An RNA of 207 nucleotides, treated with DMS and 2A3 and read out base by base. For 2A3, 8,671 sequencing reads were counted.
RNA sequence: GGGAACGACUCGAGUAGAGUCGAAAAGCAGGGCUUGAAACGCGGGUAGCGCGCACGCCCGGCGAAGAAGUUCGCAUACGCGGUGUGCUGGUGCCGAAGUGUCUGCUGCAACGGCACGCUCGACACCUAGAACAUACCGUAUUCGUACGGUAUGUAAACUUGUCUGUGUAUUCGUACACAGACAAGUAAAAGAAACAACAACAACAAC
Reactivity to DMS in 0.01 (KOAc 150mM, MgCl2 10mM, bicine 150mM(pH8.5), 24C), signal-to-noise 3, nucleotides 027 to 156: g010c040a060g010g010g010c020u030u000g020a110a070a050c040g000c020g000g030g040u000a090g000c020g040c040g030c030a090c070g020c000c000c000g020g020c020g000a060a060g000a180a120g010u000u000c050g020c040a120u000a270c050g010c080g060g040u000g030u000g010c010u000g020g010u010g020c010c030g010a050a120g010u000g020u000c030u010g000c080u000g040c070a150a160c060g010g000c010a030c010g000c060u010c000g010a030c010a020c020c010u020a170g020a100a030c010a020u000a000c000c020g050u000a010u010u000c280g020u000a010c000g000g010u000a010u000g020u000a010a090
Reactivity to 2A3 in 0.01 (KOAc 150mM, MgCl2 10mM, bicine 150mM(pH8.5), 24C), signal-to-noise 6, nucleotides 027 to 156: g020c030a010g020g030g020c020u090u120g080a120a100a030c070g010c060g050g030g050u120a050g060c040g000c020g000c090a010c010g010c000c010c000g000g000c010g000a020a040g080a080a030g160u030u030c020g000c030a030u060a200c070g040c120g020g020u010g000u000g010c050u060g030g030u030g010c010c010g020a050a040g030u060g060u070c040u070g010c040u030g000c050a060a030c010g000g000c010a000c040g020c030u010c010g010a020c010a020c020c000u040a050g040a110a010c000a000u000a000c000c000g000u000a010u010u080c190g050u020a000c000g000g000u000a000u010g000u010a040a040
Conditions: 150 mM KOAc, 10 mM MgCl2 and 150 mM bicine (pH 8.5), 24 C.